[RMDB]
RNA sequence: GGGAACGACUCGAGUAGAGUCGAAAAGAUAUGGAACGUCACGAAGAUCGUUGAAAUCGACUCGGAAACGAGUCGAUGGAGAUCCGUGAGCGUUCCUAAGUCAAACUGUCAAGUUCGCUUGACAGAACUACUAUCCGUGGUUCGCCACGGAUAGUAGAAAAGAAACAACAACAACAAC
Reactivity to 2A3 in 0.01 (KOAc 150mM, MgCl2 10mM, bicine 150mM(pH8.5), 24C), signal-to-noise 3, nucleotides 027 to 126: g020a010u040a010u080g000g000a000a000c010g020u010c020a000c040g130a240a170g030a080u040c050g110u260u060g000a010a010a000u010c000g010a010c000u000c000g020g020a030a020a030c000g000a000g010u010c000g010a010u000g000g000a000g000a010u000c020c030g020u010g030a090g080c000g000u010u000c000c000u000a040a000g010u010c040a070a110a160c010u020g000u000c010a010a020g030u070u190c300g040c140u000u010g000a000c000a010g020a030a030
Reactivity to DMS in 0.01 (KOAc 150mM, MgCl2 10mM, bicine 150mM(pH8.5), 24C), signal-to-noise 4, nucleotides 027 to 126: g020a020u000a280u000g000g000a010a020c010g040u000c010a010c020g020a300a180g010a010u000c000g020u000u010g000a130a160a020u000c000g020a030c000u000c000g010g010a070a050a130c000g040a010g010u000c000g020a010u000g010g000a070g010a000u000c110c090g010u000g000a060g010c030g000u000u000c000c000u010a000a130g000u000c030a100a100a300c010u010g010u000c000a020a010g000u000u010c300g000c010u000u000g000a020c000a000g000a120a200
The record gives the reactivity of an RNA of 177 nucleotides to 2A3 and DMS. For DMS the reverse transcriptase was MarathonRT. Values are in units of 0.01, from 0 to 300, in steps of 10. For DMS, 3,798 sequencing reads were counted. For 2A3, 8,373 sequencing reads were counted.